[RMDB]
RNA sequence: GGGAACGACUCGAGUAGAGUCGAAAAGAACUUCUGCUGUGAUGAUCUUUUGAAUAAAAUUCACAUGUCAGACUUCAGAGAUCUUUUGAUCUAUGAGAAAAAACAUUCAUAAUUCUGAGCAGAAGAAACAUCAUGCUUAGUUCGCUAAGCAUGAUGUAAAAGAAACAACAACAACAAC
Reactivity to 2A3 in 0.01 (KOAc 150mM, MgCl2 10mM, bicine 150mM(pH8.5), 24C), signal-to-noise 9, nucleotides 027 to 126: g060a080a030c010u010u000c000u000g030c010u030g060u060g090a060u030g030a060u070c050u110u210u120u100g050a060a030u130a110a060a070a070u120u110c030a030c040a110u120g050u070c040a040g050a110c010u080u020c030a010g010a010g000a050u000c020u070u240u100u300g010a010u000c010u050a030u040g020a020g090a070a070a020a010a010a010c060a060u070u100c020a020u070a100a070u130u040c050u070g100a000g000c000a000g000a010a000g000a030a060
Reactivity to DMS in 0.01 (KOAc 150mM, MgCl2 10mM, bicine 150mM(pH8.5), 24C), signal-to-noise 5, nucleotides 027 to 126: g010a170a190c010u000u000c000u000g010c010u000g030u010g020a050u010g000a070u020c110u000u010u010u010g000a030a040u030a060a050a060a300u010u000c060a040c150a040u000g010u010c040a060g000a300c130u010u010c010a020g000a040g000a010u000c010u000u030u040u030g010a000u000c020u010a040u000g000a040g010a000a020a130a150a150a030c070a040u000u000c030a060u020a050a120u010u010c080u000g010a030g000c010a000g000a010a010g000a060a040
An RNA of 177 nucleotides, treated with 2A3 and DMS and read out base by base.
Values cover nucleotides 27 to 126.
Values are in units of 0.01, from 0 to 300, in steps of 10.
It was measured as part of the RMDB libraries RFM100 and RFMREP.
For 2A3 the reverse transcriptase was SuperScript II with manganese.